The data come from the RNA Mapping Database (RMDB), library OK3TST. An RNA of 207 nucleotides, treated with 2A3 and DMS and read out base by base.
RNA sequence: GGGAACGACUCGAGUAGAGUCGAAAACUUUGAAGCCAGACACACCUAGGUUCAAAUCCCAGCCUGACUGCUGAGCUGCUGUGUGACCACAGGCAAGUGACUGUACCUCUCUGAGCCUCAUCUGAAAAAACAAGGAUAGUUUUCUUAUAUAGUAUUGUAGUACUGAUUUAUUCGUAAAUCAGUACUAAAAAGAAACAACAACAACAAC
Reactivity to 2A3 in 0.01 (KOAc 150mM, MgCl2 10mM, bicine 150mM(pH8.5), 24C), signal-to-noise 2, nucleotides 027 to 156: c030u040u070u130g040a060a030g080c010c010a020g080a020c010a010c010a020c090c040u030a090g040g000u080u040c050a070a070a020u030c010c000c000a020g010c030c020u060g020a070c020u070g000c020u030g060a020g020c000u020g000c020u020g000u010g030u050g110a060c030c010a080c050a050g060g000c050a060a100g030u020g060a040c010u030g000u110a080c040c000u040c010u000c050u060g010a020g010c010c030u010c030a080u020c020u070g070a090a120a000a000a030a000c030a030a030g080g000a020u050a060g030u000u030u190u000c020u100u090a190u060a080u070a190g040u060a110u070u190g090
Reactivity to DMS in 0.01 (KOAc 150mM, MgCl2 10mM, bicine 150mM(pH8.5), 24C), signal-to-noise 2, nucleotides 027 to 156: c070u010u000u000g020a050a110g030c020c030a070g020a120c040a070c080a060c050c050u000a060g010g010u010u000c040a070a140a160u000c020c010c010a100g030c010c010u000g010a060c000u010g010c060u020g020a140g020c040u000g030c030u020g040u000g030u010g030a160c010c060a050c060a070g000g020c030a030a100g040u010g010a090c050u000g030u010a080c040c030u010c020u010c040u010g000a160g030c020c010u000c040a060u010c030u020g020a000a040a050a070a030a090c020a050a070g020g010a130u000a080g000u000u000u000u000c020u010u000a150u010a180u000a150g010u030a140u000u010g010
Values are in units of 0.01, from 0 to 300, in steps of 10. For DMS, 3,666 sequencing reads were counted.